[RMDB]
RNA sequence: GGGAACGACUCGAGUAGAGUCGAAAAAAAACAGGUUCUUGUUGGAGAAGCAGGGUACGUGCAAAAUGCACACCGGUUGGUCGAGCUAAUUAACAAGCUCUGACGACCAUGGUGAUCGAAUGCACGUGCUCCCCUUCUCCACCAUGGCCUUAACAAACCUCUUGCAACUCUUCGGAGUUGCAAGAGGAAAAGAAACAACAACAACAAC
Reactivity to 2A3 in 0.01 (KOAc 150mM, MgCl2 10mM, bicine 150mM(pH8.5), 24C), signal-to-noise 1, nucleotides 027 to 156: a000a000a000a000c190a030g030g010u300u190c030u040u000g010u000u000g010g020a000g000a000a000g000c070a020g000g030g060u010a000c000g030u000g000c000a030a100a030a070u200g000c080a010c000a000c030c040g130g020u010u040g160g020u000c000g070a000g020c030u080a090a120u270u060a050a260c160a180a000g000c000u000c120u150g080a040c000g000a000c010c000a030u090g000g020u010g000a230u110c010g030a000a000u000g000c000a000c010g000u000g000c010u000c000c000c000c030u000u010c000u040c010c010a000c000c000a000u000g000g000c000c000u000u030a070a010c040a070a030a020

Conditions: 150 mM KOAc, 10 mM MgCl2 and 150 mM bicine (pH 8.5), 24 C. The record gives the reactivity of an RNA of 207 nucleotides to 2A3. The data come from the RNA Mapping Database (RMDB), library RFM130. As a SHAPE reagent, 2A3 marks flexible, mostly unpaired nucleotides at the ribose 2'-OH.